Structure probing data (2A3 and DMS) for a 177-nucleotide construct. Conditions: 150 mM KOAc, 10 mM MgCl2 and 150 mM bicine (pH 8.5), 24 C. It was measured as part of the RMDB library M2PK50. Values are in units of 0.01, from 0 to 300, in steps of 10.
[RMDB]
RNA sequence: GGGAACGACUCGAGUAGAGUCGAAAAGCGUUUAGCUUCGGCUAAACGCAAAUAAGCUGACCAGCUAUGAGGACAUACAUCGUCAUAGCACAAAGAAAGAGAAAACACCUCUGUUCGCAGAGGUGAACUUUACAGCAUAGUUCGCUAUGCUGUAAAGAAAAGAAACAACAACAACAAC
Reactivity to 2A3 in 0.01 (KOAc 150mM, MgCl2 10mM, bicine 150mM(pH8.5), 24C), signal-to-noise 6, nucleotides 027 to 126: g000c000g010u000u000u010a000g000c000u040u050c230g070g000c000u000a000a000a000c000g000c000a000a000a000u010a010a000g060c060u040g090a070c020c020a020g010c000u000a000u010g010a000g090g030a010c040a180u260a040c040a050u160c020g300u000c030a000u010a000g010c060a010c050a050a100a020g160a080a090a000g160a010g020a020a100a020a030c010a000c000c000u020c010u020g030u050u080c280g000c050a000g000a000g000g000u000g000a000a000
Reactivity to DMS in 0.01 (KOAc 150mM, MgCl2 10mM, bicine 150mM(pH8.5), 24C), signal-to-noise 6, nucleotides 027 to 126: g010c000g020u000u000u000a000g000c000u000u010c230g030g010c000u000a000a010a010c000g010c000a010a030a050u010a100a100g010c120u000g010a220c030c040a160g000c000u010a000u010g000a030g000g010a010c080a130u010a130c300a110u000c010g000u000c000a000u000a000g010c000a140c200a060a080a110g000a050a100a070g020a150g000a070a070a110a140c020a010c000c000u000c000u000g000u000u000c130g010c020a000g010a010g000g010u000g000a010a040